RNA sequence: GGGAACGACUCGAGUAGAGUCGAAAAGAUAUGGAAACGAACUUGACAUGGAUCGAAGAUCGAAGAACUUUCUCGGAAACGAGAAAGGGAGAUCGUAAGAUCCAACAGCAAGUUCGUUUCCUAAGUCCUCAGAAUGAUUCUUCGGAAUCAUUCUGAGAAAAGAAACAACAACAACAAC
Reactivity to DMS in 0.01 (KOAc 150mM, MgCl2 10mM, bicine 150mM(pH8.5), 24C), signal-to-noise 2, nucleotides 027 to 126: g010a120u000a270u010g020g010a000a000a020c030g040a000a000c000u010u000g020a080c080a300u010g030g060a000u000c000g000a190a300g000a000u000c000g000a060a160g050a150a200c000u000u000u000c010u000c010g000g000a070a060a190c000g000a000g000a020a000a010g010g020g000a060g020a000u000c000g010u030a100a300g010a000u000c000c000a050a070c230a190g000c000a010a000g000u000u000c010g010u000u000u000c000c010u030a010a080g000u000c060
Reactivity to 2A3 in 0.01 (KOAc 150mM, MgCl2 10mM, bicine 150mM(pH8.5), 24C), signal-to-noise 1, nucleotides 027 to 126: g030a040u140a040u170g010g010a010a000a000c010g000a000a010c010u010u040g080a180c020a190u100g000g000a000u010c020g040a120a010g000a030u030c010g130a300a020g030a120a070c000u000u000u000c010u000c010g020g070a070a130a020c010g000a020g040a030a000a000g020g010g000a050g000a010u000c000g010u000a010a020g010a000u010c000c000a000a010c000a000g010c000a000a000g000u000u000c000g010u000u030u000c000c000u000a000a000g010u000c000